[RMDB]
RNA sequence: GGGAACGACUCGAGUAGAGUCGAAAAAGGUCAUUUCAAAGAGGUCUUGUGAGGCUGUGAAACCAAGAGCUCUUAACACUGCGACCAAAGAUGGAAGUUCUCUAUAGGAUGCCAUGGCAUUUGAUGGCUCCUCCAGUACUUUCGAGUACUGGAGGAGAAAAGAAACAACAACAACAAC
Reactivity to 2A3 in 0.01 (KOAc 150mM, MgCl2 10mM, bicine 150mM(pH8.5), 24C), signal-to-noise 4, nucleotides 027 to 126: a000g030g010u050c030a050u050u140u120c050a040a050a020g010a010g090g080u020c000u010u030g050u060g050a180g170g060c140u090g100u140g200a090a020a070c030c000a000a020g000a000g050c000u000c000u050u050a060a030c070a030c110u180g060c050g010a020c020c000a050a000a020g100a030u140g030g050a080a030g050u050u010c000u000c000u040a060u060a070g030g040a050u090g000c010c010a040u080g120g000c090a120u050u050u100g090a110u080g090g000
Reactivity to DMS in 0.01 (KOAc 150mM, MgCl2 10mM, bicine 150mM(pH8.5), 24C), signal-to-noise 2, nucleotides 027 to 126: a090g000g010u000c010a100u000u010u040c100a010a070a040g060a030g000g000u000c020u000u000g010u050g000a100g000g030c070u010g000u070g080a110a170a090c060c000a000a010g020a040g020c010u000c020u000u000a110a050c080a080c160u010g000c080g010a010c040c050a060a030a080g010a140u010g020g040a090a090g000u000u000c000u010c070u040a060u020a200g030g000a010u000g000c020c030a090u010g020g000c150a030u000u000u000g000a130u000g010g040
The record gives the reactivity of an RNA of 177 nucleotides to 2A3 and DMS. The DMS profile rests on 2,781 reads. The reactions ran in a buffer of 150 mM KOAc, 10 mM MgCl2 and 150 mM bicine (pH 8.5), at 24 C. The 2A3 profile rests on 2,556 reads. 2A3 adducts were read by reverse transcription with SuperScript II with manganese. Values cover nucleotides 27 to 126.